An RNA of 177 nucleotides, treated with DMS and 2A3 and read out base by base. For DMS the reverse transcriptase was MarathonRT. For DMS, 9,150 sequencing reads were counted. The data come from the RNA Mapping Database (RMDB), library OK1LIB.
RNA sequence: GGGAACGACUCGAGUAGAGUCGAAAAAGACGAGGAGGAAGAUCGACUGAGCGAGACCGACUUCGGUGAAGGUGGCCACCUCGCCUGCGUGCCAGGUGACACGCUGCAUCAGCGCUACACCCUUCUCGCACGAGGAGACGUUCGCGUUUCCUCGUGCAAAAGAAACAACAACAACAAC
Reactivity to DMS in 0.01 (KOAc 150mM, MgCl2 10mM, bicine 150mM(pH8.5), 24C), signal-to-noise 5, nucleotides 027 to 126: a070g000a160c040g010a040g000g000a000g010g010a070a050g000a170u030c020g000a140c000u000g000a030g010c030g010a150g010a060c010c010g000a220c150u020u030c030g010g020u000g030a090a090g000g000u020g000g010c070c010a030c020c010u000c300g010c000c010u040g000c240g000u040g020c020c040a050g000g030u000g020a040c030a010c030g010c060u020g010c050a070u000c000a000g000c000g000c060u030a070c190a150c110c010c000u000u000c000u000c030
Reactivity to 2A3 in 0.01 (KOAc 150mM, MgCl2 10mM, bicine 150mM(pH8.5), 24C), signal-to-noise 9, nucleotides 027 to 126: a000g140a030c070g010a000g020g020a000g010g020a070a050g040a130u080c020g220a280c060u030g000a010g010c030g040a050g060a080c010c010g130a210c110u280u170c120g000g040u060g030a060a030g070g020u020g020g000c090c010a010c000c000u000c010g000c000c030u240g090c120g070u200g000c010c010a020g030g000u020g010a010c010a010c070g060c030u060g000c010a210u020c010a030g000c010g010c050u070a030c020a070c040c000c000u000u020c010u000c000